Notes: The record gives the reactivity of an RNA of 170 nucleotides to 2A3 and DMS. For 2A3 the reverse transcriptase was SuperScript II with manganese. The reactions ran in a buffer of 150 mM KOAc, 10 mM MgCl2 and 150 mM bicine (pH 8.5), at 24 C.
RNA sequence: GGGAACGACUCGAGUAGAGUCGAAAAGAUUAUGUCUACAACCCUUUCUUUGUCGAUGUUCAACAGUGGGGUUAUGUAGGCAAUCUUGCUACUAAUCACGAUCGUUAUUGCUCUGUCCAUCAAGGAGGUAUGGCUGUCUUCGGACAGCCAAAAAGAAACAACAACAACAAC
Reactivity to 2A3 in 0.01 (KOAc 150mM, MgCl2 10mM, bicine 150mM(pH8.5), 24C), signal-to-noise 4, nucleotides 027 to 129: g000a000u130u100a170u130g000u010c000u000a010c000a000a040c010c010c000u020u280u050c000u010u040u060g090u010c090g160a180u110g150u210u070c000a040a020c020a060g000u000g000g050g000g010u000u040a060u170g000u010a020g020g020c000a000a000u000c000u000u000g020c010u000a150c000u050a110a030u070c080a010c100g040a020u090c020g050u050u090a160u110u050g040c000u020c000u030g020u000c030c050a090u030c020a080a080g000g030a010g020g050u010a060
Reactivity to DMS in 0.01 (KOAc 150mM, MgCl2 10mM, bicine 150mM(pH8.5), 24C), signal-to-noise 5, nucleotides 027 to 129: g010a010u000u000a110u090g030u000c010u030a020c040a090a090c060c000c000u040u020u030c030u010u040u030g010u040c130g040a220u070g030u040u010c020a040a050c200a070g020u020g010g020g050g040u050u020a110u000g050u000a020g000g060c000a020a010u000c010u010u030g030c110u050a070c060u030a000a160u000c100a090c140g000a000u040c070g040u010u070a110u010u050g040c050u030c000u020g020u040c000c000a060u030c150a070a070g070g040a180g020g040u040a060